[RMDB]
RNA sequence: GGGAACGACUCGAGUAGAGUCGAAAAGGAAAUAUGCUUAAGCCUCAAUAAAGCUAGCCUUGAGUGCCUCAAGCAGAAAAUAUAGACUGAAACAUUUAGUAUGGGCAAGCAGGGAGCAAUAAAAAAACUUCUCAUAAAUGUUCGCAUUUAUGAGAAGAAAAGAAACAACAACAACAAC
Reactivity to 2A3 in 0.01 (KOAc 150mM, MgCl2 10mM, bicine 150mM(pH8.5), 24C), signal-to-noise 2, nucleotides 027 to 126: g090g030a080a080a050u200a040u070g020c010u030u030a050a010g010c000c020u040c060a040a130u090a180a060a010g030c040u050a020g050c000c030u020u020g030a030g030u080g030c000c010u070c070a050a020g020c000a020g120a060a140a020a010u220a020u040a040g100a050c000u020g020a040a150a020c020a020u150u200u060a050g010u050a080u110g010g000g000c000a000a000g000c000a010g060g010g000a020g010c040a040a120u250a210a060a020a010a000a000a060
Reactivity to DMS in 0.01 (KOAc 150mM, MgCl2 10mM, bicine 150mM(pH8.5), 24C), signal-to-noise 2, nucleotides 027 to 126: g030g000a110a120a070u010a100u000g000c000u000u000a080a120g000c040c010u010c060a100a060u000a180a130a120g010c030u000a060g020c080c060u000u000g000a050g020u000g030c050c010u010c170a030a100g060c050a080g000a040a050a060a080u000a060u020a110g010a130c080u020g000a130a070a070c120a090u010u010u010a050g020u000a030u000g000g000g010c040a010a030g010c090a050g000g000g000a070g000c040a030a030u010a000a020a060a030a050a040a140